RNA sequence: GGGAACGACUCGAGUAGAGUCGAAAAUGAAAGCUGUGUGAGCGAGGCGGGCGGAGGAUGAGGCCGUGCCCGGGCUCUGGGUGCAGCCGCCCGGGGACACGCCGUGCACCCUCGGGCUCCGGAAAAACUAGCCGUAUUGUUUCGACAAUACGGCUAGAAAAGAAACAACAACAACAAC
Reactivity to DMS in 0.01 (KOAc 150mM, MgCl2 10mM, bicine 150mM(pH8.5), 24C), signal-to-noise 1, nucleotides 027 to 126: u010g010a080a080a080g010c030u010g040u010g000u000g010a060g040c050g000a120g030g000c030g020g000g000c060g020g000a040g030g010a080u010g010a140g000g000c040c070g030u010g000c000c000c030g000g010g010c030u000c000u000g000g030g000u010g010c020a070g030c060c100g030c020c010c000g020g010g010g010a100c030a100c080g000c040c030g040u010g000c050a050c040c010c000u000c040g010g020g020c000u000c000c030g000g030a030a050a060a030a180